[RMDB]
RNA sequence: GGGAACGACUCGAGUAGAGUCGAAAAAGAGACCAAGAGUGCCACGACCCAGCAGAGACAACAAGAGAGGGUGCCAGGCAGUGUGCAAAAGGUUCAGGUGCCAGGCAGCCACGGAAGCUCCGGGGAGCCAUGGUUCCGAAUUCGUUCGGAACCAUGGAAAAGAAACAACAACAACAAC
Reactivity to DMS in 0.01 (KOAc 150mM, MgCl2 10mM, bicine 150mM(pH8.5), 24C), signal-to-noise 2, nucleotides 027 to 126: a120g000a110g020a130c080c030a110a090g040a150g000u000g010c020c020a090c060g000a110c040c020c030a020g010c060a070g000a100g000a060c040a030a060c180a090a060g010a060g000a110g040g030g010u000g010c050c020a060g010g030c010a080g020u010g000u000g010c060a090a000a010a100g010g050u000u000c050a100g000g000u000g050c020c030a050g000g000c040a040g020c000c030a060c060g020g030a080a100g060c030u000c000c020g010g000g000g030a160g010
Reactivity to 2A3 in 0.01 (KOAc 150mM, MgCl2 10mM, bicine 150mM(pH8.5), 24C), signal-to-noise 1, nucleotides 027 to 126: a020g070a030g010a010c000c060a080a030g070a020g110u090g100c010c000a040c050g080a030c010c010c020a010g000c080a020g040a000g000a030c020a170a010c010a140a110g070a010g020a040g140g030g010u020g000c010c010a010g010g020c010a080g080u000g100u010g070c010a000a000a200a290g200g000u020u110c010a020g170g090u010g030c080c010a000g040g040c000a010g090c010c000a030c050g000g020a070a000g060c010u010c040c030g050g020g000g020a010g010